Structure probing data (2A3 and DMS) for a 177-nucleotide construct. The DMS profile rests on 1,585 reads.
RNA sequence: GGGAACGACUCGAGUAGAGUCGAAAAGAUAUGGAGAUGACAGCUUUUGACGAAGUGUAAUUCGGAAACGAAUUACCUUCGAUAAGCUGCAUCUCCUAAGUCAAACUCCGUUCUUCGGAACGGAGAACAGGAUAUCGAUCUUCGGAUCGAUAUCCUGAAAAGAAACAACAACAACAAC
Reactivity to 2A3 in 0.01 (KOAc 150mM, MgCl2 10mM, bicine 150mM(pH8.5), 24C), signal-to-noise 2, nucleotides 027 to 126: g050a020u090a020u150g000g010a000g010a000u020g100a160c000a000g020c030u180u120u260u300g300a260c060g000a000a000g020u050g010u300a000a000u000u000c000g000g010a070a060a000c010g010a000a030u000u000a000c000c000u000u000c000g000a010u030a010a000g010c000u020g030c000a000u000c000u050c000c000u000a020a010g000u000c030a010a020a080c000u000c000c000g000u000u000c020u020u020c300g180g000a000a010c020g000g000a000g010a000a010
Reactivity to DMS in 0.01 (KOAc 150mM, MgCl2 10mM, bicine 150mM(pH8.5), 24C), signal-to-noise 2, nucleotides 027 to 126: g000a010u000a300u020g000g020a000g010a010u000g000a180c000a010g010c000u030u000u000u000g050a300c160g010a000a000g020u020g030u000a000a000u000u000c000g000g000a110a060a160c000g000a080a020u000u000a000c000c000u000u000c000g030a050u000a000a020g060c000u010g000c000a000u000c000u000c010c010u010a000a050g030u000c010a160a140a240c010u000c000c000g020u000u000c000u000u020c200g010g010a000a000c000g000g010a020g020a020a140